An RNA of 177 nucleotides, treated with 2A3 and DMS and read out base by base. For DMS, 1,673 sequencing reads were counted. The reactions ran in a buffer of 150 mM KOAc, 10 mM MgCl2 and 150 mM bicine (pH 8.5), at 24 C.
[RMDB]
RNA sequence: GGGAACGACUCGAGUAGAGUCGAAAACGGCUACGAUACAAUGUUAGCAGCGGUAGCUGAAAAGUAUAAUAUGACCCAUAUCCAAGUGGAGGGUUACCUACACAAUUUAUUGGAAAUGAUAGAUAAAACCCUUUCCUUAUUUCGAUAAGGAAAGGGUAAAAGAAACAACAACAACAAC
Reactivity to 2A3 in 0.01 (KOAc 150mM, MgCl2 10mM, bicine 150mM(pH8.5), 24C), signal-to-noise 2, nucleotides 027 to 126: c000g000g000c010u000a000c000g030a030u030a130c060a300a070u200g080u200u110a040g080c040a010g050c040g150g000u010a010g030c000u000g040a050a040a030a040g050u040a070u050a300a110u150a100u080g040a020c030c000c000a020u020a020u090c010c010a120a000g000u030g000g050a020g000g020g020u070u100a110c000c000u060a000c000a010c020a040a100u160u160u100a100u010u130g000g040a020a070a110u080g030a000u060a150g170a020u100a090a000a020
Reactivity to DMS in 0.01 (KOAc 150mM, MgCl2 10mM, bicine 150mM(pH8.5), 24C), signal-to-noise 3, nucleotides 027 to 126: c070g000g010c030u000a030c050g010a150u000a070c140a120a130u010g000u000u010a070g010c060a060g000c090g000g020u000a020g010c000u000g000a010a090a070a110g000u000a050u000a090a140u000a100u010g000a100c060c030c020a060u000a140u000c020c040a030a070g000u000g000g000a010g000g020g020u010u010a070c020c000u000a030c020a000c010a170a090u010u000u000a250u070u000g020g000a030a140a120u000g000a130u000a080g010a090u040a090a130a050